[RMDB]
RNA sequence: GGGAACGACUCGAGUAGAGUCGAAAAGAUAUGGAUUGCUGGAGCUAGGAUACCGAUGAGUCGGAAACGACGAGGUAUCACUAGCGUUGAAAGCAAUCCUAAGUCAAAAGCGGCGUUCGCGCCGCAACAUCGUCUUAAGCUUCGGCUUAAGACGAUGAAAAGAAACAACAACAACAAC
Reactivity to 2A3 in 0.01 (KOAc 150mM, MgCl2 10mM, bicine 150mM(pH8.5), 24C), signal-to-noise 1, nucleotides 027 to 126: g020a010u070a050u160g010g000a020u000u000g030c020u000g070g000a000g000c010u000a010g040g000a020u010a030c010c040g170a200u230g110a080g030u020c020g060g000a090a090a070c020g020a000c010g060a050g040g000u020a010u030c010a070c060u010a000g000c000g020u030u010g010a000a020a000g020c000a000a000u000c020c000u010a030a010g060u000c030a000a000a070a170g010c000g010g000c000g040u040u170c250g000c030g000c090c000g000c000a000a010
Reactivity to DMS in 0.01 (KOAc 150mM, MgCl2 10mM, bicine 150mM(pH8.5), 24C), signal-to-noise 2, nucleotides 027 to 126: g000a070u000a300u010g000g000a020u010u000g010c000u000g020g060a070g000c010u000a000g000g020a030u000a000c000c000g010a190u010g000a180g010u000c000g000g000a060a100a230c020g010a010c000g000a140g000g000u000a000u020c010a090c010u000a000g010c010g050u000u010g000a120a080a030g000c000a000a000u000c000c000u000a000a080g020u000c040a100a090a120a150g010c010g000g000c010g020u010u010c250g010c000g010c010c000g010c000a020a110